[RMDB]
RNA sequence: GGGAACGACUCGAGUAGAGUCGAAAAGAUAUGGAGGAGGGAGAAAUCUCAUGCGAAGAACUCGGAAACGAGGGAGCAUGAUCUUUCGAAGAACUCCUCCUAAGUCAAACUUACCUUCGGGUAAGAACGCAUAUCCUUAGUUCGCUAAGGAUAUGCGAAAAGAAACAACAACAACAAC
Reactivity to 2A3 in 0.01 (KOAc 150mM, MgCl2 10mM, bicine 150mM(pH8.5), 24C), signal-to-noise 1, nucleotides 027 to 126: g000a010u050a030u140g010g000a010g010g010a000g020g020g000a090g030a000a020a000u040c000u000c020a010u010g000c020g160a300a060g060a060a050c010u000c000g020g050a070a050a050c000g000a000g000g030g000a010g010c000a000u000g000a000u000c040u000u000u040c070g100a300a090g020a060a000c000u000c000c000u000c020c000u000a040a000g020u000c030a010a040a050c000u000u010a000c000c040u050u110c290g030g000g000u010a010a010g020a080a040
Reactivity to DMS in 0.01 (KOAc 150mM, MgCl2 10mM, bicine 150mM(pH8.5), 24C), signal-to-noise 1, nucleotides 027 to 126: g000a060u010a280u010g000g000a000g000g000a010g000g000g000a150g000a000a000a010u000c120u000c010a000u000g000c000g000a100a220g000a100a170c000u000c000g000g030a110a100a140c000g000a010g000g020g040a080g030c000a040u000g000a010u010c120u000u000u000c000g000a070a100g010a130a200c000u000c000c000u000c010c000u010a000a060g010u000c050a090a090a190c010u000u000a000c000c000u020u000c230g040g020g000u000a010a010g010a140a130